[RMDB]
RNA sequence: GGGAACGACUCGAGUAGAGUCGAAAACUGGCGCUUGAACUGCCCAACAUGGUCGAUCGCCAUUCUUACCUGGUGAUGGAGCCGUCCUACUUUCCAGUCACUCUUGGGGAAGGUGUGAGGUUCUCCGAACUCAUUUAUCAUUCGUGAUAAAUGAGUUAAAAGAAACAACAACAACAAC
Reactivity to 2A3 in 0.01 (KOAc 150mM, MgCl2 10mM, bicine 150mM(pH8.5), 24C), signal-to-noise 9, nucleotides 027 to 126: c020u010g020g000c030g020c040u040u070g050a100a040c030u090g020c020c050c020a060a050c040a130u200g020g020u040c020g040a040u020c010g000c010c010a030u080u020c050u080u090a140c020c020u050g040g020u100g050a100u130g030g040a020g020c010c010g170u070c010c000u060a120c020u030u040u000c010c020a070g070u100c030a070c110u140c050u120u170g080g000g000g020a020a020g020g010u050g040u060g040a050g030g000u050u020c040u000c020c010g020
Reactivity to DMS in 0.01 (KOAc 150mM, MgCl2 10mM, bicine 150mM(pH8.5), 24C), signal-to-noise 9, nucleotides 027 to 126: c150u000g010g010c040g020c140u000u000g010a070a070c070u000g010c050c060c070a100a120c140a080u000g010g010u000c030g010a030u000c030g010c010c010a040u000u000c080u010u000a130c080c070u010g000g020u010g010a090u010g010g000a070g010c170c030g000u000c040c020u000a090c050u000u000u000c020c020a110g000u010c080a070c110u000c110u000u000g010g000g000g010a090a060g000g010u000g010u000g000a160g010g010u000u000c020u000c040c070g010